[RMDB]
RNA sequence: GGGAACGACUCGAGUAGAGUCGAAAAUCAGUUGCCGACCCGCCUGUGGGUGGCACCGCCAACCCGUAUGGACGCCGCACAGUUGACCGAAGAAGGCUACUACAGCGUCUUCGGUAAGAGUGGUGCGUACCGAGGGACUGUUCGCAGUCCCUCGGUAAAAAGAAACAACAACAACAAC
Reactivity to DMS in 0.01 (KOAc 150mM, MgCl2 10mM, bicine 150mM(pH8.5), 24C), signal-to-noise 1, nucleotides 027 to 126: u010c110a100g010u020u000g000c020c000g000a050c020c000c000g010c180c140u020g010u000g010g050g010u000g000g000c000a010c080c070g100c070c060a110a070c030c020c020g020u020a090u030g010g000a140c040g020c050c060g010c030a010c060a180g000u010u000g010a030c020c010g000a030a000g010a010a020g020g010c000u000a150c220u010a130c210a040g010c000g000u020c000u000u060c010g000g020u010a010a030g010a120g070u010g000g030u000g000c040g030